[RMDB]
RNA sequence: GGGAACGACUCGAGUAGAGUCGAAAAGCGCCUGGAAGCUGACCGGGUUGAUGGAAAAGCCGAGAAUUUCAUGAUGCACGUUGUUGAUGGCAAAGAAGUUCAGCGACGUUGGCAUCUGGGCGUAGAGCCGUAUGUCCACUUUCGAGUGGACAUACGGAAAAGAAACAACAACAACAAC
Reactivity to DMS in 0.01 (KOAc 150mM, MgCl2 10mM, bicine 150mM(pH8.5), 24C), signal-to-noise 2, nucleotides 027 to 126: g020c010g020c000c000u030g010g000a050a060g080c010u050g000a050c020c070g030g050g030u000u050g010a100u000g000g050a090a120a140a160g010c000c010g000a210g030a110a050u000u000u010c020a090u000g020a190u020g010c070a110c100g040u000u000g000u000u030g010a250u010g030g000c070a070a090a100g020a060a100g010u000u000c010a090g000c050g070a300c300g010u000u000g020g030c000a010u000c000u000g020g000g010c000g010u050a100g010a240g020
Reactivity to 2A3 in 0.01 (KOAc 150mM, MgCl2 10mM, bicine 150mM(pH8.5), 24C), signal-to-noise 1, nucleotides 027 to 126: g000c020g000c000c010u100g030g030a000a040g060c050u030g020a030c020c000g040g110g000u060u000g110a100u110g020g060a220a000a000a000g030c020c010g080a050g140a140a090u080u120u100c090a090u220g020a050u140g050c010a000c110g010u010u010g080u020u080g070a060u100g070g000c070a060a000a060g080a040a020g070u010u010c010a020g030c000g010a000c040g030u030u070g090g050c000a000u010c000u020g010g000g000c020g000u050a050g030a010g080

Source information:
The record gives the reactivity of an RNA of 177 nucleotides to DMS and 2A3. 2A3 adducts were read by reverse transcription with SuperScript II with manganese. It was measured as part of the RMDB library OK2TST. The DMS profile rests on 886 reads. Conditions: 150 mM KOAc, 10 mM MgCl2 and 150 mM bicine (pH 8.5), 24 C.